[RMDB]
RNA sequence: GGGAACGACUCGAGUAGAGUCGAAAAGUAGGGGACACUUCCCACUGAGGGUUUCCCGGCGUAAGUUCCUGAACAAUUUGCGGAAAUUGGUGUGGGUCGUAUUGUCCCCCCCUCUCCGCCAGAUUGACUUAACCUCAUUGUUCGCAAUGAGGUUAAGAAAAGAAACAACAACAACAAC
Reactivity to 2A3 in 0.01 (KOAc 150mM, MgCl2 10mM, bicine 150mM(pH8.5), 24C), signal-to-noise 1, nucleotides 027 to 126: g040u060a060g020g000g000g000a000c000a020c020u030u050c000c010c000a000c030u020g080a100g060g040g000u000u020u000c020c010c000g040g010c050g070u130a110a100g070u030u070c020c050u100g020a000a030c040a060a090u010u080u170g020c050g000g080a020a000a000u080u040g120g000u030g070u040g040g000g030u060c030g010u070a150u110u200g000u070c010c030c000c000c000c050c000u030c010u020c020c000g110c050c000a110g030a150u070u080g030a060
Reactivity to DMS in 0.01 (KOAc 150mM, MgCl2 10mM, bicine 150mM(pH8.5), 24C), signal-to-noise 3, nucleotides 027 to 126: g010u010a110g040g010g010g010a020c040a090c030u010u010c000c010c010a030c060u000g020a130g010g010g000u000u010u000c000c000c050g000g030c140g000u000a070a120g000u000u000c020c040u010g000a130a120c130a050a050u000u000u010g020c080g000g010a010a020a030u000u000g000g010u010g020u000g000g000g000u000c030g000u010a140u020u000g010u010c000c000c000c000c010c000c010u000c040u000c000c010g000c140c100a070g010a140u010u000g000a290
Overview
An RNA of 177 nucleotides, treated with 2A3 and DMS and read out base by base. Source: RMDB library RFMREP, as collected in RNAgym. Conditions: 150 mM KOAc, 10 mM MgCl2 and 150 mM bicine (pH 8.5), 24 C. The 2A3 profile rests on 1,136 reads.